[RMDB]
RNA sequence: GGGAACGACUCGAGUAGAGUCGAAAAGAUAUGGAAGCGAACUACAAAGAAACUAGCGUUGAAAUCGGAAACGAUGGAGCUAGUAUAUUUGCGCUUCCUAAGUCAAACGGUAGGUUCGCCUACCGAACCCAGUAACACUGUUCGCAGUGUUACUGGGAAAAGAAACAACAACAACAAC
Reactivity to 2A3 in 0.01 (KOAc 150mM, MgCl2 10mM, bicine 150mM(pH8.5), 24C), signal-to-noise 3, nucleotides 027 to 126: g030a030u060a030u180g000g010a010a000g010c010g010a070a060c060u240a090c300a010a040a020g020a030a090a010c000u000a010g000c050g240u300u070g030a060a090a010u020c010g010g050a060a030a030c000g000a010u010g010g000a010g000c000u020a000g020u000a000u010a010u010u000u020g000c000g000c000u000u020c010c000u010a080a020g030u000c020a100a040a110c020g000g000u000a000g040g050u050u060c300g100c040c000u000a010c000c010g000a010a000
Reactivity to DMS in 0.01 (KOAc 150mM, MgCl2 10mM, bicine 150mM(pH8.5), 24C), signal-to-noise 3, nucleotides 027 to 126: g000a080u000a300u000g010g000a020a010g010c010g000a110a050c080u010a300c050a000a010a010g020a190a220a030c000u000a010g000c000g010u000u030g000a130a120a020u000c000g010g010a070a040a210c000g000a000u000g000g000a120g010c010u000a010g000u000a000u010a110u010u000u000g010c000g000c000u000u010c010c000u000a030a050g010u000c000a110a060a170c010g000g010u000a010g000g000u000u020c270g030c000c000u000a010c000c000g000a030a030